[RMDB]
RNA sequence: GGGAACGACUCGAGUAGAGUCGAAAAGAUAUGGAGCGGUAGGGAGUAAGUCGGAAACGAUAGUUACGACGAUCUACCCGCUCCUAAGUCAAAGUUCUUGUAAUACGUUCGCGUAUUACAAGAACAAGCUUCUAAUUAGGUUCGCCUAAUUAGAAGCAAAAGAAACAACAACAACAAC
Reactivity to DMS in 0.01 (KOAc 150mM, MgCl2 10mM, bicine 150mM(pH8.5), 24C), signal-to-noise 7, nucleotides 027 to 126: g000a040u010a300u000g000g010a000g020c010g010g010u000a030g010g010g010a090g020u010a060a140g010u000c000g000g000a110a060a090c000g010a130u000a090g010u010u000a190c020g010a050c080g010a100u000c000u000a050c090c030c040g020c010u000c000c010u000a010a080g010u000c050a100a090a140g010u000u000c000u000u000g000u000a010a000u000a000c000g020u000u010c250g020c020g010u000a000u000u000a000c000a000a010g000a000a000c000a050a080
Reactivity to 2A3 in 0.01 (KOAc 150mM, MgCl2 10mM, bicine 150mM(pH8.5), 24C), signal-to-noise 8, nucleotides 027 to 126: g020a000u070a020u150g000g000a010g010c010g020g040u060a050g100g080g020a100g070u130a130a050g000u030c020g020g050a160a040a010c030g080a170u130a300g160u040u040a020c070g060a040c010g010a070u020c000u010a060c020c020c010g000c000u000c000c000u010a070a020g050u020c070a150a060a050g010u010u000c000u000u000g010u000a000a010u000a020c010g020u020u070c300g000c000g160u010a000u010u000a000c000a000a000g000a000a000c000a000a000

Record summary
The data come from the RNA Mapping Database (RMDB), library TTRDEL. This 177-nucleotide RNA was probed chemically with DMS and 2A3. High 2A3 reactivity points to a flexible backbone, as in loops and unpaired stretches. The 2A3 profile rests on 27,366 reads. For DMS the reverse transcriptase was MarathonRT. The RNA was probed in 150 mM KOAc, 10 mM MgCl2 and 150 mM bicine (pH 8.5) at 24 C.